[RMDB]
RNA sequence: GGGAACGACUCGAGUAGAGUCGAAAACUGUGGUGAGUCCCUAUCUAGUAUAGCAAUCCACCAAGCAGGUGAGUUCACACAAUUCAGGUUCUCACAGAAAAUGCGCCCUGACUUGACAGGUAUGGUCCAUCCACCAGGAUUUCGAUCCUGGUGGAUGAAAAGAAACAACAACAACAAC
Reactivity to 2A3 in 0.01 (KOAc 150mM, MgCl2 10mM, bicine 150mM(pH8.5), 24C), signal-to-noise 4, nucleotides 027 to 126: c040u040g000u030g070g000u040g020a070g120u070c020c010c000u010a030u020c050u020a060g110u070a070u020a080g030c010a000a150u010c000c010a000c000c000a070a050g080c030a000g060g080u010g050a020g010u060u070c030a010c010a010c050a210a150u200u100c050a050g010g000u020u000c010u000c000a030c010a020g140a020a100a000a040u140g020c020g020c010c000c000u030g040a070c020u090u070g000a020c030a060g040g030u110a140u130g060g020u030c030
Reactivity to DMS in 0.01 (KOAc 150mM, MgCl2 10mM, bicine 150mM(pH8.5), 24C), signal-to-noise 3, nucleotides 027 to 126: c040u010g030u020g000g000u010g010a090g020u010c190c300c000u010a040u010c070u020a070g040u010a010u010a010g000c150a090a100u050c010c000a020c030c030a080a140g020c110a100g010g010u020g000a010g000u010u000c000a090c060a090c160a100a080u000u050c090a100g000g010u010u000c030u000c020a010c050a090g010a070a030a030a060u010g000c110g000c140c010c000u000g030a040c040u010u020g010a060c090a060g000g010u020a030u000g000g000u010c120